[RMDB]
Background:
Structure probing data (DMS and 2A3) for a 177-nucleotide construct. Values cover nucleotides 27 to 126.

RNA sequence: GGGAACGACUCGAGUAGAGUCGAAAAUCUUGCCUGGAUGGAAUGAUUAGGAUUUCGUCAGGUUUCCUAACAAGCUUAAGUCCAGAAGUAUCAAAAUUGGGAACUAAAUAGUAGUAGAGAUGUGUGAACAUACCCGAACAUUCGUGUUCGGGUAUGUAAAAGAAACAACAACAACAAC
Reactivity to DMS in 0.01 (KOAc 150mM, MgCl2 10mM, bicine 150mM(pH8.5), 24C), signal-to-noise 4, nucleotides 027 to 126: u010c040u000u000g000c070c000u000g020g040a050u010g000g010a090a040u010g000a270u000u000a090g000g010a040u000u010u000c020g010u010c140a070g020g020u000u000u000c000c000u000a030a080c140a080a090g000c080u000u000a110a140g000u010c010c010a030g010a070a090g000u000a060u000c140a090a040a040a080u020u010g010g010g010a070a070c050u010a080a070a110u000a030g010u000a060g010u000a050g010a060g010a040u000g020u000g010u000g000a140
Reactivity to 2A3 in 0.01 (KOAc 150mM, MgCl2 10mM, bicine 150mM(pH8.5), 24C), signal-to-noise 2, nucleotides 027 to 126: u010c020u030u060g050c000c010u070g100g050a040u030g020g080a090a050u020g110a300u090u170a050g110g000a010u000u070u010c030g040u080c010a010g020g090u000u000u000c000c000u030a080a030c060a100a000g060c010u160u140a060a000g020u000c000c010a040g000a170a010g090u060a000u090c050a070a050a000a230u160u120g070g010g050a020a020c020u010a100a010a180u110a050g110u030a040g040u000a010g020a000g000a120u060g190u000g060u090g250a000